RNA sequence: GGGAACGACUCGAGUAGAGUCGAAAAUACUUAUGUUAUGCACAACUAUGGUAUUGUUGUCUUCUGUGUAUCACUUGUAUGUCUUCAAUCAGGUCUUAUCAAGUGAUGUUAUGUUUGAAGAUGCCCACGUGAUAUCUCACUUCGGUGAGAUAUCACGAAAAGAAACAACAACAACAAC
Reactivity to 2A3 in 0.01 (KOAc 150mM, MgCl2 10mM, bicine 150mM(pH8.5), 24C), signal-to-noise 2, nucleotides 027 to 126: u010a000c010u050u050a050u150g010u000u010a150u300g140c060a090c010a090a020c010u020a050u100g030g000u000a000u030u060g050u060u130g030u000c000u000u000c000u020g040u000g000u050a000u010c000a020c000u020u010g020u020a050u110g020u010c010u060u090c150a150a290u120c020a040g030g040u000c010u060u130a110u180c010a020a000g000u000g010a010u000g010u030u090a070u030g170u010u120u060g000a010a010g010a010u030g000c000c000c010a030
Reactivity to DMS in 0.01 (KOAc 150mM, MgCl2 10mM, bicine 150mM(pH8.5), 24C), signal-to-noise 2, nucleotides 027 to 126: u000a020c000u000u000a080u000g000u000u000a080u000g020c300a170c260a000a020c020u000a200u000g000g000u000a020u000u000g010u010u000g010u000c020u000u000c000u000g060u000g000u020a000u000c000a010c000u000u000g000u000a070u020g010u000c000u010u000c190a120a090u010c300a050g010g020u000c040u010u000a140u030c040a020a020g020u000g000a010u000g010u000u010a040u010g010u020u000u010g000a020a010g000a050u000g010c020c000c000a140